[RMDB]
RNA sequence: GGGAACGACUCGAGUAGAGUCGAAAAUAGUUUUUUCAGUGAAUUGUUAUCAGCAUAAAUCGCAGUCAAGAAGGGCAAGUUUUGCAACUCUGGCAAUUCUUCCAGCUGAUUAUUACCAGCAGCAAUAAGCCUGUGAAUGAUUCGUCAUUCACAGGCUAAAAGAAACAACAACAACAAC
Reactivity to DMS in 0.01 (KOAc 150mM, MgCl2 10mM, bicine 150mM(pH8.5), 24C), signal-to-noise 1, nucleotides 027 to 126: u000a050g010u000u000u000u000u000u000c050a040g010u010g010a130a050u010u010g000u000u030a080u000c020a060g010c010a090u010a040a030a100u010c120g030c060a050g030u030c130a050a050g000a160a140g020g010g000c010a040a150g010u010u000u010u020g020c070a060a090c060u000c080u010g000g020c100a030a060u000u000c030u010u010c050c100a120g020c030u020g000a010u000u000a080u030u000a060c130c050a050g000c140a100g000c020a050a040u000a070
Structure probing data (DMS) for a 177-nucleotide construct.
Values cover nucleotides 27 to 126.
Reactivities are rounded to 0.1 and cut off at 0 and 3.
The reactions ran in a buffer of 150 mM KOAc, 10 mM MgCl2 and 150 mM bicine (pH 8.5), at 24 C.